[RMDB]
RNA sequence: GGGAACGACUCGAGUAGAGUCGAAAAGGGCGAGCAGCCGCAAAUUGCACGUCGGCGAGUGGGGAAGCGCUACCGGCACGGUCACCGGCUCCCAGCAGGUGGCCAGCGGCGCGCUGUCGAUCGCUGAUCCUCGAGCAUUCGACCGGCAGCCUGGCGAUCUACAAAACGCUUUCGAGCGUUUUGUAGAAAAAGAAACAACAACAACAAC
Reactivity to 2A3 in 0.01 (KOAc 150mM, MgCl2 10mM, bicine 150mM(pH8.5), 24C), signal-to-noise 1, nucleotides 027 to 156: g000g010g000c000g040a130g010c130a040g000c050c020g000c120a170a170a030u060u070g050c020a000c100g030u050c010g030g020c060g020a000g080u140g010g000g050g050a020a020g010c000g010c030u100a190c010c030g150g050c010a030c140g010g000u010c010a010c000c010g000g020c000u150c040c000c010a010g020c030a010g000g000u000g000g000c000c000a000g000c000g010g000c010g010c000g020c000u020g070u040c020g010a020u010c050g000c150u100g020a070u100c010c060u090c060g020a010g020c060a020u050u070c030g050a130c000c000g000g000c000a000g000c000c000u010g000g000c020g020a060